Chemical mapping of a 177-nucleotide RNA with 2A3. The data come from the RNA Mapping Database (RMDB), library OK1LIB.
RNA sequence: GGGAACGACUCGAGUAGAGUCGAAAACUCGUGGGCAUUCCAGCACUUUUCCCCGCAAAAGAUGUGCGGGGAGUAUACGCGCAAAAGCGUGCGCACGCCCGCUUGGGUUGCGUCAUCUGUGCGGGUAGAUACGGCCUCGUUUCGACGAGGCCGUAUCAAAAGAAACAACAACAACAAC
Reactivity to 2A3 in 0.01 (KOAc 150mM, MgCl2 10mM, bicine 150mM(pH8.5), 24C), signal-to-noise 1, nucleotides 027 to 126: c020u000c050g050u080g000g040g000c090a000u000u180c000c000a100g040c000a000c000u090u040u000u010c000c020c030c040g000c080a030a030a030a000g150a110u160g070u000g120c000g000g000g000g000a000g000u000a000u020a000c000g010c000g070c060a000a000a000a200g020c010g050u050g000c030g030c140a090c210g000c020c020c010g000c120u170u300g110g000g010u000u050g000c000g020u040c020a090u010c020u020g060u000g000c000g000g000g000u120a030